RNA sequence: GGGAACGACUCGAGUAGAGUCGAAAAGAUAUGGAGGAAAAGUCAGCUUUGAUCAUGUGGAUCGGAAACGAUCCCAUGGGAGCUGUCGCUCCUCCUAAGUCAAAAGGGAGAGCUUCGGCUCUCCCAAUCAUGAAAUAAUGUUCGCAUUAUUUCAUGAAAAAGAAACAACAACAACAAC
Reactivity to 2A3 in 0.01 (KOAc 150mM, MgCl2 10mM, bicine 150mM(pH8.5), 24C), signal-to-noise 5, nucleotides 027 to 126: g010a000u030a010u090g000g000a010g030g020a010a080a080a120g050u030c000a000g000c010u300u300u060g020a030u070c000a000u010g150u300g020g010a000u000c000g010g000a010a030a020c000g000a000u000c010c000c000a000u000g000g010g000a010g000c010u010g000u020c020g020c040u000c000c000u000c000c000u000a020a010g030u010c030a010a050a140a170g010g020g000a020g000a010g000c030u090u120c300g120g000c010u010c000u010c000c000c000a000a020
Reactivity to DMS in 0.01 (KOAc 150mM, MgCl2 10mM, bicine 150mM(pH8.5), 24C), signal-to-noise 9, nucleotides 027 to 126: g000a020u000a150u010g000g010a020g010g000a020a070a110a180g010u000c000a010g020c000u010u000u020g000a030u020c000a010u000g010u020g020g000a010u000c000g020g000a040a040a070c000g010a000u000c000c000c010a000u000g000g000g000a000g030c000u000g010u000c040g000c220u000c000c000u000c000c000u000a000a070g000u000c030a080a100a150a150g000g010g000a020g000a020g020c000u000u010c270g030g010c000u000c000u000c000c000c000a000a010